The record gives the reactivity of an RNA of 177 nucleotides to DMS.
Values are in units of 0.01, from 0 to 300, in steps of 10.
For DMS, 3,802 sequencing reads were counted.
For DMS the reverse transcriptase was MarathonRT.
It was measured as part of the RMDB library TTRINS.
The RNA was probed in 150 mM KOAc, 10 mM MgCl2 and 150 mM bicine (pH 8.5) at 24 C.
Reactivities are given for positions 27 through 126.

RNA sequence: GGGAACGACUCGAGUAGAGUCGAAAAGAUAUGGAGCAGCGCUUUUUGCAUGUUGAAGCAACAGCUAUUCAUCGGAAACGAUGACGGUAGACAUGCUUACACAUGCAAAAAGCGCUGCUCCUAAGUCGAAUACUAAUUCGUUCGCGAAUUAGUAUUCAAAAGAAACAACAACAACAAC
Reactivity to DMS in 0.01 (KOAc 150mM, MgCl2 10mM, bicine 150mM(pH8.5), 24C), signal-to-noise 5, nucleotides 027 to 126: g010a120u000a300u010g000g010a010g010c000a010g030c000g030c000u000u000u000u030u000g000c010a000u000g010u010u010g050a060a020g000c000a040a090c300a300g000c010u000a010u010u000c010a000u010c000g000g000a140a100a220c010g010a000u000g020a020c300g000g010u000a020g000a100c210a120u000g000c000u000u000a160c090a010c000a000u000g000c000a000a000a000a000a000g000c020g030c000u000g000c010u000c000c000u000a010a050g000u010c150